[RMDB]
RNA sequence: GGGAACGACUCGAGUAGAGUCGAAAACUAGCGGUUUAGCCGCUUGGGCCUGGGCCGCACAAGUGGUCGAUGAACCAAUCGCACGCCAGCUUGGCAACCUGUUCCAGCGUGCCUGGUUCUUCGAAUAAAUGCGAUCAAUAUUCGUAUUGAUCGCAUUAAAAGAAACAACAACAACAAC
Reactivity to DMS in 0.01 (KOAc 150mM, MgCl2 10mM, bicine 150mM(pH8.5), 24C), signal-to-noise 5, nucleotides 027 to 126: c030u000a070g020c040g010g010u000u000u000a090g010c000c010g000c190u010u010g030g010g020c090c070u000g020g010g020c060c080g020c030a080c190a060a060g020u000g010g020u000c010g000a010u000g010a010a020c000c010a020a060u000c290g010c020a000c010g020c000c050a070g000c060u000u000g010g000c130a110a070c230c060u010g010u020u000c100c120a160g000c010g020u000g000c010c130u000g000g000u000u000c010u000u010c000g010a040a090u000a070
Reactivity to 2A3 in 0.01 (KOAc 150mM, MgCl2 10mM, bicine 150mM(pH8.5), 24C), signal-to-noise 2, nucleotides 027 to 126: c010u010a020g020c010g000g050u030u070u150a030g030c000c020g140c180u080u090g070g010g010c020c070u040g000g050g000c010c020g000c020a050c040a100a160g120u110g110g050u070c010g010a020u020g010a000a010c010c000a000a040u090c060g000c010a000c010g000c020c020a050g040c000u050u050g030g000c030a040a060c020c100u110g080u240u030c060c010a010g000c000g000u010g000c010c010u000g000g000u000u000c000u010u000c020g010a010a020u090a070